[RMDB]
RNA sequence: GGGAACGACUCGAGUAGAGUCGAAAAAUUCGCCGAGAAGCCUCUGUUCGAAAUCAUCGGGAGUGAUCCAGAUGACGGUCCUGCCAUGAGACCGCAACGAGAGCAUGUCGCAUCAAAUGGACUCGGGUAUACUAGGUGACGUUCGCGUCACCUAGAACUAUUACAGAGACUUCGGUCUCUGUAAUAGAAAAGAAACAACAACAACAAC
Reactivity to DMS in 0.01 (KOAc 150mM, MgCl2 10mM, bicine 150mM(pH8.5), 24C), signal-to-noise 3, nucleotides 027 to 156: a170u000u000c010g000c030c010g020a120g010a160a130g010c030c000u010c020u020g000u000u000c010g020a080a110a070u000c010a020u000c020g020g000g020a070g000u010g000a220u000c020c010a080g010a040u000g010a040c040g000g010u000c020c000u000g000c090c170a070u010g000a060g010a030c010c020g030c060a060a070c070g020a280g010a080g000c050a080u000g010u010c030g050c020a190u000c050a070a060a300u000g010g030a100c000u000c020g030g040g020u010a090u020a110c010u000a010g020g000u000g020a030c000g010u000u010c300g050c030g050u000c000a010c000c000u000a000g010a030a200
Reactivity to 2A3 in 0.01 (KOAc 150mM, MgCl2 10mM, bicine 150mM(pH8.5), 24C), signal-to-noise 4, nucleotides 027 to 156: a020u080u050c020g030c010c000g000a010g020a100a060g010c020c050u030c080u090g030u040u050c070g040a120a090a070u030c010a010u020c030g010g020g000a020g050u130g040a100u030c020c000a040g020a080u080g020a040c020g000g000u000c000c010u060g050c030c010a080u060g020a000g000a090c020c010g020c060a050a060c040g060a010g000a010g030c010a060u170g040u020c040g040c070a110u100c060a080a070a070u070g020g000a010c000u010c020g000g030g060u110a080u040a160c000u000a000g000g000u000g010a010c010g020u040u030c250g030c000g090u000c000a000c000c000u000a000g000a000a000